Overview:
An RNA of 177 nucleotides, treated with DMS and 2A3 and read out base by base. DMS adducts were read by reverse transcription with MarathonRT. The RNA was probed in 150 mM KOAc, 10 mM MgCl2 and 150 mM bicine (pH 8.5) at 24 C. In probing experiments dimethyl sulfate is read out at A N1 and C N3, which are open when not base-paired. Source: RMDB library OK2TRN, as collected in RNAgym.
RNA sequence: GGGAACGACUCGAGUAGAGUCGAAAAUUUCAUAGCUGCCUAUUUGCCUUUUCAAUGCUCUGGGCAGCAAGUUAAUUUGCUCCAAACUGACUUGCGUAAAUUGACUCGCAAUAAGUCAAAUUUUUUACAUAAAUAGCUGGUUCGCCAGCUAUUUAUGAAAAGAAACAACAACAACAAC
Reactivity to DMS in 0.01 (KOAc 150mM, MgCl2 10mM, bicine 150mM(pH8.5), 24C), signal-to-noise 4, nucleotides 027 to 126: u010u010u010c050a140u010a210g010c010u010g000c010c010u000a030u010u010u000g000c020c140u010u020u000u020c280a140a090u000g020c010u010c110u000g000g000g020c010a040g010c000a040a030g000u020u000a010a010u000u000u000g020c170u000c050c040a090a080a080c170u010g010a070c090u000u000g000c040g010u010a040a090a150u010u000g000a190c150u000c030g020c040a050a100u010a120a030g000u000c030a050a090a030u000u000u000u000u000u000a190
Reactivity to 2A3 in 0.01 (KOAc 150mM, MgCl2 10mM, bicine 150mM(pH8.5), 24C), signal-to-noise 2, nucleotides 027 to 126: u010u020u040c060a040u100a060g000c000u010g000c000c000u040a120u100u040u020g020c000c030u120u160u140u300c190a140a050u130g000c010u000c000u030g000g000g000c000a000g000c010a000a000g020u000u010a020a050u020u020u050g030c030u000c030c000a070a060a200c050u070g010a020c000u000u070g000c020g040u090a040a130a300u180u230g070a050c020u000c070g020c010a020a130u050a120a020g030u010c010a070a070a090u090u000u000u020u040u030a050